[RMDB]
RNA sequence: GGGAACGACUCGAGUAGAGUCGAAAAGAGAGUCGGGCCAGCAUACUAAUGAUGCUGCCUUCCAGAGAAGCCACAACAAAGUCGGAUCCUUGGUCAUUAGUCAAAGUGCUGUAGGCGAAUGCAACUACAUCCACGGAUUAUUCGUAAUCCGUGGAUGAAAAGAAACAACAACAACAAC
Reactivity to DMS in 0.01 (KOAc 150mM, MgCl2 10mM, bicine 150mM(pH8.5), 24C), signal-to-noise 4, nucleotides 027 to 126: g020a130g000a090g020u000c010g000g040g020c150c040a020g020c030a040u000a080c080u010a080a080u040g000a070u000g000c030u000g010c050c020u030u040c020c060a090g000a120g030a050a060g000c020c040a060c060a070a100c180a080a080a110g000u020c020g000g000a060u000c010c020u020u020g010g020u010c000a050u010u010a060g000u000c110a040a100a080g020u010g060c060u000g020u000a080g000g000c070g000a050a050u010g000c100a030a070c120u000a160
Reactivity to 2A3 in 0.01 (KOAc 150mM, MgCl2 10mM, bicine 150mM(pH8.5), 24C), signal-to-noise 6, nucleotides 027 to 126: g130a000g000a000g020u070c030g010g020g000c060c000a010g010c010a030u140a170c050u150a190a120u200g060a010u020g010c020u000g020c000c010u060u030c050c010a030g020a010g020a160a030g050c020c010a060c030a120a090c040a050a190a010g090u080c040g020g020a050u030c010c000u030u090g030g000u030c030a020u020u090a010g040u060c040a070a080a020g060u060g040c040u050g030u120a030g020g080c060g050a050a020u110g030c030a040a020c020u070a020